An RNA of 177 nucleotides, treated with 2A3 and DMS and read out base by base. For DMS, 778 sequencing reads were counted. For 2A3, 1,241 sequencing reads were counted. Source: RMDB library RFMREP, as collected in RNAgym. As a SHAPE reagent, 2A3 marks flexible, mostly unpaired nucleotides at the ribose 2'-OH. The RNA was probed in 150 mM KOAc, 10 mM MgCl2 and 150 mM bicine (pH 8.5) at 24 C.

RNA sequence: GGGAACGACUCGAGUAGAGUCGAAAAAUGGCAGUUUUAAAAAAACCAUCUAGUAAGGUAAAUGACCGGACGAGCGUUACAUAAAACGCAUACCUAACUAAUGAAGAAUUUGAAACUGUACAAUGUGCACUGUUGUUGAGUUCGCUCAACAACAGUGAAAAGAAACAACAACAACAAC
Reactivity to 2A3 in 0.01 (KOAc 150mM, MgCl2 10mM, bicine 150mM(pH8.5), 24C), signal-to-noise 1, nucleotides 027 to 126: a000u010g040g000c010a000g000u000u040u000u000a020a000a000a000a000a000a000c020c000a000u020c070u040a000g000u000a000a040g040g010u020a050a100a130u210g060a080c000c080g090g040a030c090g100a050g030c010g000u000u040a090c070a140u300a210a270a010a000c000g000c010a040u010a010c000c000u000a010a020c000u000a030a000u010g020a010a080g010a040a030u040u010u010g030a010a000a000c000u000g000u050a220c010a020a100u080g050u110g160
Reactivity to DMS in 0.01 (KOAc 150mM, MgCl2 10mM, bicine 150mM(pH8.5), 24C), signal-to-noise 1, nucleotides 027 to 126: a150u020g000g000c000a010g020u000u000u000u000a000a000a040a030a050a110a120c110c000a020u000c170u020a020g050u000a070a000g000g000u010a010a240a070u020g020a100c090c080g000g000a160c190g000a120g000c000g010u000u010a070c270a100u020a040a030a000a000c000g000c000a290u010a020c010c000u000a030a010c000u000a030a010u000g020a040a030g020a140a140u000u000u000g000a000a010a020c000u000g050u000a070c020a050a080u000g020u000g010